RNA sequence: GGGAACGACUCGAGUAGAGUCGAAAACGCACUCGCAGCUUAAUAACCUGCGCUGAGCCCUUCUCCCCCAGCUUGCCUGUGUCCUAGGGAAUAGGAAGGUCAUCCUUCACAGGAUCGUGUGGAAGUCAUUACUCGUGAGUGUUCGCACUCACGAGAACCUAGAUUACAAGUUCGCUUGUAAUCUAGGAAAAGAAACAACAACAACAAC
Reactivity to DMS in 0.01 (KOAc 150mM, MgCl2 10mM, bicine 150mM(pH8.5), 24C), signal-to-noise 3, nucleotides 027 to 156: c080g020c030a100c020u000c010g020c010a020g030c030u000u000a210a150u020a120a120c230c010u000g010c010g000c130u000g020a070g000c030c000c050u000u000c030u010c040c020c000c010c010a080g010c040u000u010g000c010c010u010g030u000g030u000c040c040u000a120g040g000g010a090a070u000a080g040g000a050a040g000g040u010c090a140u000c000c010u000u000c070a160c080a080g000g010a050u000c090g050u000g000u010g010g000a050a300g020u000c040a090u010u000a140c000u000c010g010u020g050a020g040u010g040u010u000c300g000c020a020c000u000c000a000c010g010a000g010a010a050
Reactivity to 2A3 in 0.01 (KOAc 150mM, MgCl2 10mM, bicine 150mM(pH8.5), 24C), signal-to-noise 3, nucleotides 027 to 156: c040g000c000a070c010u020c010g000c000a000g000c000u050u010a070a000u030a040a030c010c000u020g020c010g030c200u060g020a030g020c030c010c010u160u120c110u100c020c000c000c000c000a000g030c030u030u110g030c000c010u010g010u000g040u080c030c050u040a040g010g060g070a080a070u060a090g030g010a020a000g010g000u050c030a100u100c020c010u030u050c010a030c000a040g030g020a040u040c050g020u060g010u020g090g040a070a030g030u030c000a080u080u160a070c010u000c000g000u010g000a000g000u000g020u020u010c040g020c040a000c000u000c000a000c000g000a000g000a000a000